[RMDB]
RNA sequence: GGGAACGACUCGAGUAGAGUCGAAAAAGGGGAAUGAGCCUCGUCGUCGACGAAGGGGUGCAUUCCGAAGAGCUGGCCUGGCGUCGUCCGGCUCCCUCGACCGCACCGGAGCGCUAGAAAAGGUCCUGAUGUAUAAUUGCUUCGGCAAUUAUACAUCAAAAGAAACAACAACAACAAC
Reactivity to DMS in 0.01 (KOAc 150mM, MgCl2 10mM, bicine 150mM(pH8.5), 24C), signal-to-noise 2, nucleotides 027 to 126: a070g000g010g000g010a020a030u010g010a300g000c000c010u000c000g010u000c010g000u000c220g020a130c060g020a050a040g000g010g020g020u000g010c010a030u000u000c000c030g000a100a050g000a070g010c020u010g000g010c300c010u010g000g000c010g010u000c120g010u000c020c000g000g000c090u000c010c000c000u010c090g020a090c050c070g010c180a200c010c020g000g000a070g000c010g010c020u020a040g000a040a150a130a060g000g010u000c010c060u010
Reactivity to 2A3 in 0.01 (KOAc 150mM, MgCl2 10mM, bicine 150mM(pH8.5), 24C), signal-to-noise 2, nucleotides 027 to 126: a000g210g020g010g000a000a020u010g000a000g020c020c010u000c000g050u000c010g040u060c110g100a300c060g010a030a020g030g010g000g020u030g020c000a000u030u000c000c000g000a040a010g020a030g060c030u050g000g030c020c000u020g010g010c000g020u100c050g120u000c020c000g020g010c030u060c020c000c000u080c030g100a130c060c050g010c010a030c020c010g000g010a020g040c010g000c010u030a020g120a050a150a010a000g010g050u030c020c030u050